[RMDB]
RNA sequence: GGGAACGACUCGAGUAGAGUCGAAAACAUUGAGGAAGGUGAUGGAAGAGUCAUCCUGGGGGAACCCUCAGCCAUCACGGCUGCCAGCGCUGCUCAGCGGAGAGGACGCAUAGGAAGAAACCCAUCAUAUGAUGAUAACAUUCGUGUUAUCAUCAUAAAAAGAAACAACAACAACAAC
Reactivity to 2A3 in 0.01 (KOAc 150mM, MgCl2 10mM, bicine 150mM(pH8.5), 24C), signal-to-noise 9, nucleotides 027 to 126: c050a060u120u190g070a060g070g050a130a030g060g020u030g010a020u030g000g050a080a060g030a070g090u050c030a070u050c030c030u040g000g000g000g000g060a080a120c020c010c000u020c010a010g000c010c000a070u150c050a010c060g020g010c010u020g010c010c010a050g000c040g000c040u090g010c000u020c060a050g030c070g060g040a070g000a020g050g030a030c010g000c030a050u080a070g040g020a040a060g020a070a070a020c010c010c000a030u070c010a010
Reactivity to DMS in 0.01 (KOAc 150mM, MgCl2 10mM, bicine 150mM(pH8.5), 24C), signal-to-noise 9, nucleotides 027 to 126: c090a130u030u020g000a070g000g020a090a070g000g010u000g000a050u000g000g010a100a070g010a090g000u010c050a070u010c040c010u000g010g010g000g010g010a110a110c100c050c010u000c030a050g000c020c010a070u010c130a090c150g000g010c030u010g000c060c050a090g010c050g010c060u010g000c020u000c040a110g010c090g010g000a090g010a080g000g010a080c060g010c040a070u020a080g000g000a080a070g000a060a090a120c030c010c010a080u030c110a120
This 177-nucleotide RNA was probed chemically with 2A3 and DMS.
The DMS profile rests on 37,510 reads.